[RMDB]
RNA sequence: GGGAACGACUCGAGUAGAGUCGAAAAGAUAUGGAUCGCUUCAGGGAGCUCCGUGUCGGAAACGACACCGGGAGCGAAGAACUGACGGGCGAUCCUAAGUCAAAAGCUGAAGGUUCGCCUUCAGCAACAAACUAAGAUGCUUCGGCAUCUUAGUUUGAAAAGAAACAACAACAACAAC
Reactivity to DMS in 0.01 (KOAc 150mM, MgCl2 10mM, bicine 150mM(pH8.5), 24C), signal-to-noise 4, nucleotides 027 to 126: g000a020u000a100u020g000g000a010u000c010g020c000u000u010c010a020g010g010g010a100g010c000u000c010c010g000u000g010u000c000g010g000a040a010a070c000g000a010c000a000c250c300g040g000g010a010g020c000g000a040a150g000a150a300c010u000g010a040c300g010g000g000c000g000a020u000c000c000u000a010a070g000u000c010a100a090a120a150g000c000u000g000a030a000g010g000u000u010c300g000c000c000u010u000c000a000g000c000a060a050
Reactivity to 2A3 in 0.01 (KOAc 150mM, MgCl2 10mM, bicine 150mM(pH8.5), 24C), signal-to-noise 2, nucleotides 027 to 126: g000a010u030a010u080g010g000a000u020c020g020c010u090u040c020a010g020g000g120a090g010c000u000c020c000g000u000g020u000c000g000g020a000a030a000c010g000a000c010a000c060c180g300g020g050a010g020c000g020a040a020g010a010a010c010u020g010a020c130g150g070g000c000g000a000u000c000c000u000a000a000g020u010c030a030a050a020a220g000c000u000g010a000a020g090g020u080u230c300g160c070c000u030u000c000a010g000c000a010a010

This 177-nucleotide RNA was probed chemically with DMS and 2A3. For 2A3, 6,815 sequencing reads were counted. The data come from the RNA Mapping Database (RMDB), library TTRDES.